[RMDB]
An RNA of 177 nucleotides, treated with DMS and 2A3 and read out base by base. 2A3 adducts were read by reverse transcription with SuperScript II with manganese. For DMS, 9,193 sequencing reads were counted. Source: RMDB library TTRDES, as collected in RNAgym.

RNA sequence: GGGAACGACUCGAGUAGAGUCGAAAAGAUAUGGAGAGUCCAUGGGCUUGAUGACCGAAUUCGGAAACGAAUUCGCAAGAGUGCAUGGAGCUCUCCUAAGUCAAAAUCUAUGCGUUCGCGCAUAGAACAAAUGAUCAUUCUUCGGAAUGAUCAUUUGAAAAGAAACAACAACAACAAC
Reactivity to DMS in 0.01 (KOAc 150mM, MgCl2 10mM, bicine 150mM(pH8.5), 24C), signal-to-noise 7, nucleotides 027 to 126: g010a050u010a300u010g010g010a010g000a030g010u000c000c000a010u000g010g000g010c010u000u000g010a140u010g010a130c300c010g010a020a000u000u000c000g000g000a120a110a210c000g010a020a010u000u000c000g010c020a050a120g000a010g030u000g000c000a020u000g000g000a040g010c010u000c000u000c000c000u000a010a080g000u000c060a100a090a140a190u000c000u000a010u000g000c000g040u000u010c280g030c010g010c000a000u000a010g010a040a250
Reactivity to 2A3 in 0.01 (KOAc 150mM, MgCl2 10mM, bicine 150mM(pH8.5), 24C), signal-to-noise 5, nucleotides 027 to 126: g010a010u070a020u200g010g000a010g000a000g010u000c000c010a010u020g030g140g040c010u090u050g020a150u130g040a300c070c010g000a000a000u010u010c010g010g060a040a090a050c010g000a010a010u010u010c000g000c010a190a240g010a000g010u100g180c010a000u010g010g000a030g020c000u000c000u000c000c000u000a040a010g030u000c030a020a020a040a270u000c000u010a010u000g000c010g030u040u090c300g030c000g000c130a000u000a020g010a000a020